[RMDB]
RNA sequence: GGGAACGACUCGAGUAGAGUCGAAAAUGUAUAGUACCUUACACUGCAUUGUACUAUUAUGCUACAUUCUAUUUUACUAAUGAGCCUGCAUUUAUUAUGCAUGUUUCUUGGUACAUUAUGUUCGGGCCACGUUAGAACGGUUCGCCGUUCUAACGUGAAAAGAAACAACAACAACAAC
Reactivity to 2A3 in 0.01 (KOAc 150mM, MgCl2 10mM, bicine 150mM(pH8.5), 24C), signal-to-noise 1, nucleotides 027 to 126: u100g040u010a070u010a010g000u010a020c000c000u040u040a060c220a070c070u190g000c030a050u000u040g010u000a000c010u040a040u120u060a090u090g030c020u080a100c020a040u010u000c010u040a080u060u090u000u050a000c000u010a000a040u090g010a000g020c010c010u000g000c000a010u000u090u030a220u280u090a010u050g020c010a010u020g010u000u100u010c000u000u000g000g020u040a050c020a030u100u110a050u080g090u030u030c040g050g040g000c030
Reactivity to DMS in 0.01 (KOAc 150mM, MgCl2 10mM, bicine 150mM(pH8.5), 24C), signal-to-noise 1, nucleotides 027 to 126: u000g050u000a010u000a060g000u000a010c020c050u000u000a130c070a140c260u010g000c120a000u030u010g000u000a000c060u020a040u000u000a070u000g010c070u000a080c140a070u000u000c140u020a060u000u020u000u000a030c010u010a000a040u000g000a010g000c010c000u000g010c000a020u000u000u000a070u030u010a010u000g010c000a010u000g010u000u000u000c100u000u000g000g020u000a020c230a060u000u010a020u010g010u000u000c080g000g020g020c120